[RMDB]
The data come from the RNA Mapping Database (RMDB), library OK2TST. This 177-nucleotide RNA was probed chemically with 2A3 and DMS.
RNA sequence: GGGAACGACUCGAGUAGAGUCGAAAAAUGGAGAAAGGAAACAAUGGAGCUUGUUUUUGGCUACGCACUGGGAUUUUUGGUGUUGAUGCCGUUACUGACGCUCAUGCAUGAGCUUGGUCAUGCGAUAAGUCGCCUGAUUAUUCGUAAUCAGGCGACUAAAAGAAACAACAACAACAAC
Reactivity to 2A3 in 0.01 (KOAc 150mM, MgCl2 10mM, bicine 150mM(pH8.5), 24C), signal-to-noise 1, nucleotides 027 to 126: a000u090g020g000a030g000a000a010a010g050g000a060a020a000c040a070a060u150g070g000a030g040c000u010u000g070u020u070u040u140u200g050g010c000u020a040c030g000c010a010c000u040g160g020g190a300u100u170u010u080u300g000g000u040g010u010u040g030a040u090g000c000c010g000u030u040a000c020u070g060a030c040g000c010u000c020a020u160g000c000a030u080g020a020g060c040u090u030g030g020u040c010a020u030g000c000g020a010u060a150
Reactivity to DMS in 0.01 (KOAc 150mM, MgCl2 10mM, bicine 150mM(pH8.5), 24C), signal-to-noise 2, nucleotides 027 to 126: a060u000g000g010a030g000a040a050a030g010g000a030a050a040c060a070a080u000g000g020a080g010c030u000u010g000u020u000u000u000u010g050g000c010u000a300c300g000c010a010c010u000g010g000g010a190u000u000u010u020u000g000g000u000g010u000u000g020a110u000g000c020c000g040u010u000a030c040u010g020a080c170g000c020u000c020a090u000g010c030a040u000g010a020g000c170u000u000g010g000u000c010a010u000g010c010g000a070u000a060

Background:
The reactions ran in a buffer of 150 mM KOAc, 10 mM MgCl2 and 150 mM bicine (pH 8.5), at 24 C.